Structure probing data (DMS and 2A3) for a 177-nucleotide construct. The data come from the RNA Mapping Database (RMDB), library OK2TRN. For DMS the reverse transcriptase was MarathonRT. The DMS profile rests on 868 reads. For 2A3, 1,046 sequencing reads were counted. The RNA was probed in 150 mM KOAc, 10 mM MgCl2 and 150 mM bicine (pH 8.5) at 24 C. Values cover nucleotides 27 to 126.
RNA sequence: GGGAACGACUCGAGUAGAGUCGAAAAUGGAUCCAUGGACUAGGAUCUAGUCUAGAGUCAUGUGAUCACACGUCAUGGGUACGCUAGGACAUGAGUCUACUGAGUACGUACAUGUGCAUAGCUCAGCGACCAGGCAUCCUUUCGAGGAUGCCUGGUCAAAAGAAACAACAACAACAAC
Reactivity to DMS in 0.01 (KOAc 150mM, MgCl2 10mM, bicine 150mM(pH8.5), 24C), signal-to-noise 1, nucleotides 027 to 126: u000g020g000a040u000c000c010a050u000g020g000a110c050u000a100g000g000a070u000c130u000a090g000u000c000u000a040g020a160g000u000c010a010u020g000u030g000a000u000c060a100c190a040c150g000u000c020a070u000g000g010g000u010a020c030g010c030u000a080g000g010a070c110a040u020g020a090g010u000c000u000a150c070u000g000a030g010u000a060c110g000u000a110c040a040u060g020u000g000c050a030u000a120g000c000u010c040a110g050c280
Reactivity to 2A3 in 0.01 (KOAc 150mM, MgCl2 10mM, bicine 150mM(pH8.5), 24C), signal-to-noise 1, nucleotides 027 to 126: u140g020g010a090u030c000c030a030u020g060g000a010c000u030a030g040g010a090u060c110u140a010g140u000c000u020a020g020a020g100u000c000a000u000g050u150g030a000u030c020a000c000a000c100g010u030c020a040u070g090g010g010u160a010c050g000c020u050a030g090g060a000c000a060u200g060a100g070u080c020u040a120c070u070g030a000g020u070a020c030g000u040a050c000a040u090g020u090g130c040a060u030a090g000c000u010c020a030g150c000